This 207-nucleotide RNA was probed chemically with 2A3. The RNA was probed in 150 mM KOAc, 10 mM MgCl2 and 150 mM bicine (pH 8.5) at 24 C. It was measured as part of the RMDB library M2RFPK. Reactivities are given for positions 27 through 156.
RNA sequence: GGGAACGACUCGAGUAGAGUCGAAAAAUCAGCCUUCGUUCUGUAAACGGGGUUGGAUCCGACUCUCAUAGGCUCUCCAACCCAACUCCUACUCAAUACGUCCUCGUCGUACAGAAGGGUAACAUGUAAAACGAAGGCUGCUUCGGCAGCCUUCGAAGUCUUGUCUAUCGUUCGCGAUAGACAAGACAAAAGAAACAACAACAACAAC
Reactivity to 2A3 in 0.01 (KOAc 150mM, MgCl2 10mM, bicine 150mM(pH8.5), 24C), signal-to-noise 2, nucleotides 027 to 156: a000u060c000a010g030c000c080u130u200c050g090u050u060c040u120g100u160a000a020a150c060g000g000g000g000u000u000g020g000a040u240c020c010g150a160c050u100c020u020c090a170u090a210g000g000c020u000c000u000c010c000a000a000c010c000c000a000a000c020u000c000c000u050a050c000u010c070a080a110u080a230c090g030u050c010c040u020c060g150u020c000g030u030a000c000a060g040a040a020g040g010g020u010a060a010c040a080u090g070u170a100a080a010a080c060g000a000a000g000g010c000u000g000c010u000u010c050g110g010c000a000g000c000c000u010u000c000g010a000a000